This 177-nucleotide RNA was probed chemically with 2A3 and DMS. For 2A3, 4,200 sequencing reads were counted. The data come from the RNA Mapping Database (RMDB), library TTRDEL.

[RMDB]
RNA sequence: GGGAACGACUCGAGUAGAGUCGAAAAGAUAUGGAAAGGACUUUUGACGAGCCCUACUCGGAAACGAGUAGGUGCUCGAUAAGUCCUUCCUAAGUCAAAUCAGUGUCGCCUUCGGGCGACACUGAAACCAAGGUAAUUACUUCGGUAAUUACCUUGGAAAAGAAACAACAACAACAAC
Reactivity to 2A3 in 0.01 (KOAc 150mM, MgCl2 10mM, bicine 150mM(pH8.5), 24C), signal-to-noise 2, nucleotides 027 to 126: g010a020u070a020u080g010g010a060a130a130g070g000a020c030u040u110u210u300g300a300c280g000a000g010c000c010c010u000a000c000u000c000g000g010a080a050a040c000g010a000g030u000a010g010g020u020g010c000u000c010g000a000u000a000a000g000u000c000c000u000u000c000c000u020a040a010g050u020c040a000a030a290u050c000a010g010u000g010u000c000g020c010c000u030u150c280g160g010g000c000g010a000c000a000c010u000g000a000a000a000
Reactivity to DMS in 0.01 (KOAc 150mM, MgCl2 10mM, bicine 150mM(pH8.5), 24C), signal-to-noise 3, nucleotides 027 to 126: g000a030u000a300u010g010g000a020a030a060g020g010a010c000u000u010u010u020g010a170c150g000a010g010c010c000c000u000a000c000u000c010g030g000a060a080a170c010g000a010g020u000a010g000g010u000g010c010u000c010g010a040u000a000a020g010u000c000c010u010u000c000c000u000a070a230g010u010c020a060a130a170u010c010a000g020u000g020u010c010g000c010c000u010u010c280g030g010g050c010g010a010c000a000c000u000g010a020a040a140
For DMS the reverse transcriptase was MarathonRT. For 2A3 the reverse transcriptase was SuperScript II with manganese.